[RMDB]
RNA sequence: GGGAACGACUCGAGUAGAGUCGAAAAUUACACAGACAGUGAGGAUGUUGGCUUAGAAGCAGCCACCAUUUAAAAAAUGCGUAAUAGCUUACUCAUCGAGUGAUCCUGCGCCGAAAAUGAUUGGCGACUUCACAAUACGGUUCGCCGUAUUGUGAAGAAAAGAAACAACAACAACAAC
Reactivity to 2A3 in 0.01 (KOAc 150mM, MgCl2 10mM, bicine 150mM(pH8.5), 24C), signal-to-noise 3, nucleotides 027 to 126: u000u000a010c030a000c020a020g140a120c020a020g110u040g080a060g080g030a020u010g000u020u030g010g000c020u060u040a100g060a300a030g140c060a000g010c010c010a000c010c000a010u050u080u140a040a100a000a000a000a010u030g010c010g000u010a010a000u010a030g020c010u010u020a030c000u000c000a040u010c000g010a000g020u000g010a040u000c000c010u020g040c000g000c000c000g070a070a070a040a120u230g060a130u040u050g000g010c000g000a010
Reactivity to DMS in 0.01 (KOAc 150mM, MgCl2 10mM, bicine 150mM(pH8.5), 24C), signal-to-noise 2, nucleotides 027 to 126: u000u000a000c030a010c020a040g050a160c260a130g000u010g010a140g000g000a010u000g010u020u000g000g000c020u000u000a130g020a160a140g010c300a030g010c000c000a010c030c000a020u000u000u000a000a040a110a050a070a060u000g010c040g010u000a000a040u000a100g010c190u000u000a080c020u010c000a060u000c020g020a050g000u010g000a100u000c000c000u000g000c000g020c020c020g000a020a070a080a070u030g000a160u000u000g010g000c040g000a120
Notes:
This 177-nucleotide RNA was probed chemically with 2A3 and DMS. The reactions ran in a buffer of 150 mM KOAc, 10 mM MgCl2 and 150 mM bicine (pH 8.5), at 24 C. The 2A3 profile rests on 3,846 reads. The data come from the RNA Mapping Database (RMDB), library RFMREP. Values cover nucleotides 27 to 126.